[RMDB]
This 177-nucleotide RNA was probed chemically with 2A3 and DMS. The RNA was probed in 150 mM KOAc, 10 mM MgCl2 and 150 mM bicine (pH 8.5) at 24 C. It was measured as part of the RMDB libraries RFM100 and RFMREP. DMS adducts were read by reverse transcription with MarathonRT.
RNA sequence: GGGAACGACUCGAGUAGAGUCGAAAAGAAGGAUGCCCAGAAGGUACCCGUAGGUAACAAGUGACACUAUGGAUCUGAUCUGGGGCUGGAUACCUCUAUCUUGGUGAUCCAGUUAAAAAACGUCUAGACAUAAGUGAUGGUUCGCCAUCACUUAUGUAAAAGAAACAACAACAACAAC
Reactivity to 2A3 in 0.01 (KOAc 150mM, MgCl2 10mM, bicine 150mM(pH8.5), 24C), signal-to-noise 9, nucleotides 027 to 126: g150a050a030g070g020a020u040g020c000c010c000a000g010a010a010g030g000u050a080c000c000c010g000u000a000g010g020u070a030a010c050a160a300g010u020g030a010c010a000c010u000a000u010g000g010a010u000c010u020g050a230u040c000u000g000g000g000g000c000u000g000g000a010u020a020c020c000u020c030u110a260u150c110u070u140g020g000u050g080a020u000c000c000a000g000u010u020a040a050a010a000a010a000c030g020u010c020u040a050g020
Reactivity to DMS in 0.01 (KOAc 150mM, MgCl2 10mM, bicine 150mM(pH8.5), 24C), signal-to-noise 9, nucleotides 027 to 126: g010a140a120g010g000a100u000g000c000c000c000a010g010a060a300g000g000u000a050c090c010c000g010u000a000g000g000u040a010a020c000a130a050g000u040g000a220c300a020c010u000a010u010g000g000a030u000c000u000g000a110u030c000u000g000g000g000g000c000u000g000g000a010u000a020c010c000u020c270u030a080u040c130u030u000g010g010u000g010a100u000c000c010a010g010u000u010a000a020a090a040a020a080c070g010u000c010u000a100g010